[RMDB]
RNA sequence: GGGAACGACUCGAGUAGAGUCGAAAAAGUCAGCUUCGGCUGACUAAAAAGAUAUGGAUGGAGUGGUGCGGAGAGUAUACUGGAUUCGGAAACGAAUCUUAUACCUCGGAUAGCCACGAUGAAAUCCUAAGUCAAAAAAUAUCGGUUCGCCGAUAAACGGUGUUAUGAUAUUCGUAUCAUAACACCGAAAAGAAACAACAACAACAAC
Reactivity to 2A3 in 0.01 (KOAc 150mM, MgCl2 10mM, bicine 150mM(pH8.5), 24C), signal-to-noise 3, nucleotides 027 to 156: a000g000u000c000a000g000c010u080u150c220g150g010c000u000g000a000c000u010a000a010a000a000a000g060a020u080a020u140g000g000a000u000g020g000a000g010u010g020g020u060g060c190g030g000a030g020a030g000u000a010u010a040c190u120g040g000a000u000u000c020g020g010a070a070a040c010g000a000a000u000c000u010u000a000u000a000c000c000u000c010g020g020a030u040a060g010c000c000a000c000g010a020u010g000a010a010a000u000c020c010u050a070a030g020u020c050a070a020a060a020a000a080u130a010u060c000g030g000u040u050c190g040c110c020g020a010u120a080a060a010
Reactivity to DMS in 0.01 (KOAc 150mM, MgCl2 10mM, bicine 150mM(pH8.5), 24C), signal-to-noise 2, nucleotides 027 to 156: a100g020u000c000a030g000c000u000u000c300g090g040c020u000g000a040c000u000a000a040a060a160a040g000a050u000a300u010g000g000a060u000g030g000a190g000u020g000g040u000g000c190g050g010a140g000a240g000u000a030u000a000c290u000g030g000a020u010u000c020g010g010a100a160a270c010g000a010a000u000c000u010u000a020u000a000c040c010u000c000g020g000a220u010a160g000c040c010a020c000g010a080u000g010a070a100a110u000c000c020u000a040a150g000u000c000a000a020a080a090a080a130u000a020u000c000g000g000u000u000c300g030c000c010g020a030u000a040a080a200
This 207-nucleotide RNA was probed chemically with 2A3 and DMS. Reactivities are given for positions 27 through 156. For DMS the reverse transcriptase was MarathonRT. Conditions: 150 mM KOAc, 10 mM MgCl2 and 150 mM bicine (pH 8.5), 24 C. 2A3 adducts were read by reverse transcription with SuperScript II with manganese. The DMS profile rests on 3,117 reads.